[RMDB]
RNA sequence: GGGAACGACUCGAGUAGAGUCGAAAAGGUACCAAGUUAUAGAUUGUGACAGGUACACAGUCGGUGAGCGCUACAGCAGCGCAAGGUAGACCGGAACAUGGGCACCCGGUGAUGUUAAAUGCGUUGAAGAGUCAUUGGUGUUCGCACCAGUGACUCUAAAAGAAACAACAACAACAAC
Reactivity to DMS in 0.01 (KOAc 150mM, MgCl2 10mM, bicine 150mM(pH8.5), 24C), signal-to-noise 8, nucleotides 027 to 126: g010g000u010a090c010c020a130a110g020u020u010a080u020a090g000a090u010u010g010u000g000a080c030a160g010g020u020a050c020a030c040a040g000u010c000g000g030u020g010a110g000c010g000c030u010a080c170a090g010c170a030g020c030g010c020a040a030g000g010u010a070g000a080c050c020g000g010a060a070c090a090u010g010g010g010c040a100c030c000c030g000g010u000g010a070u000g000u000u010a040a070a100u040g000c120g020u010u000g000a140
Reactivity to 2A3 in 0.01 (KOAc 150mM, MgCl2 10mM, bicine 150mM(pH8.5), 24C), signal-to-noise 4, nucleotides 027 to 126: g120g010u020a020c010c010a050a030g000u030u040a140u050a070g110a170u090u130g030u020g060a030c060a060g000g080u050a050c070a010c030a030g050u010c000g010g030u080g020a050g020c010g000c020u040a050c040a080g040c010a000g000c040g000c010a000a010g060g000u020a000g020a030c000c020g010g010a020a010c030a030u070g010g000g000c010a030c000c000c000g000g010u010g010a080u020g000u070u040a040a070a030u080g000c030g030u020u010g050a070